Chemical mapping of a 177-nucleotide RNA with 2A3 and DMS.

[RMDB]
RNA sequence: GGGAACGACUCGAGUAGAGUCGAAAAUGCGGUUGCUGGGAUUCGAGCGGGUCGAGCUCGAACCCGGCCAGACUCGGCGGGUAAGGAUCGAGGCGGACCCGCGACUGCUCGCCCGCUACGACGGCGACCGUUGGGAACCAUUCGUGGUUCCCAACGGAAAAGAAACAACAACAACAAC
Reactivity to 2A3 in 0.01 (KOAc 150mM, MgCl2 10mM, bicine 150mM(pH8.5), 24C), signal-to-noise 3, nucleotides 027 to 126: u190g030c000g020g010u130u070g020c010u120g010g070g140a150u060u060c030g010a030g000c010g020g050g040u180c100g010a010g040c020u010c010g060a010a020c010c000c010g040g000c010c010a020g080a110c070u110c200g010g000c060g060g040g000u110a180a120g100g030a160u050c010g000a020g010g090c080g110g040a090c040c010c010g000c000g030a040c030u070g000c010u030c000g000c000c030c000g040c020u050a130c060g070a020c010g000g020c010g020a010
Reactivity to DMS in 0.01 (KOAc 150mM, MgCl2 10mM, bicine 150mM(pH8.5), 24C), signal-to-noise 2, nucleotides 027 to 126: u050g000c050g000g010u030u020g030c000u000g020g000g020a220u000u020c050g030a070g020c000g000g000g000u020c040g030a030g000c000u000c050g010a100a060c070c020c000g030g000c040c020a030g010a100c190u020c140g020g030c020g020g000g020u010a100a180g010g000a090u030c000g000a050g030g000c100g000g000a100c040c000c000g020c020g010a030c150u010g010c030u000c000g010c040c000c000g000c020u000a100c050g000a140c030g000g010c020g000a030

The RNA was probed in 150 mM KOAc, 10 mM MgCl2 and 150 mM bicine (pH 8.5) at 24 C. Reactivities are given for positions 27 through 126. The data come from the RNA Mapping Database (RMDB), library OK1LIB.